[RMDB]
This 207-nucleotide RNA was probed chemically with 2A3.

RNA sequence: GGGAACGACUCGAGUAGAGUCGAAAAAGAGCCGGAUACGUCCGGCUCAACGGGGGCUACGUGUGGUGCCGUCCGCUCCCCCUAUGGCAUAACAAAUGCACCACACACUAGGCUACGGCCUAGUGAAAAAAGGUGUAUGUGUUCGCACAUACACCAAGAUCUGUGUAAGGUUCGCCUUACACAGAUCAAAAGAAACAACAACAACAAC
Reactivity to 2A3 in 0.01 (KOAc 150mM, MgCl2 10mM, bicine 150mM(pH8.5), 24C), signal-to-noise 2, nucleotides 027 to 156: a010g000a000g000c030c000g020g010a020u040a060c220g080u020c000c000g000g000c000u010c000a000a010c000g000g000g000g000g000c000u020a000c000g030u030g000u000g120g000u000g020c000c000g010u040c050c070g020c020u090c000c020c010c000c000u120a160u180g100g000c110a160u110a270a020c030a090a080a040u080g000c000a000c000c000a000c000a000c000a000c000u000a000g000g000c000u020a020c240g090g000c000c000u000a010g000u010g000a070a000a000a000a010a010g010g000u010g000u000a000u000g010u000g010u020u080c110g020c120a010c000a000u000a000c000a000c000c000a000a010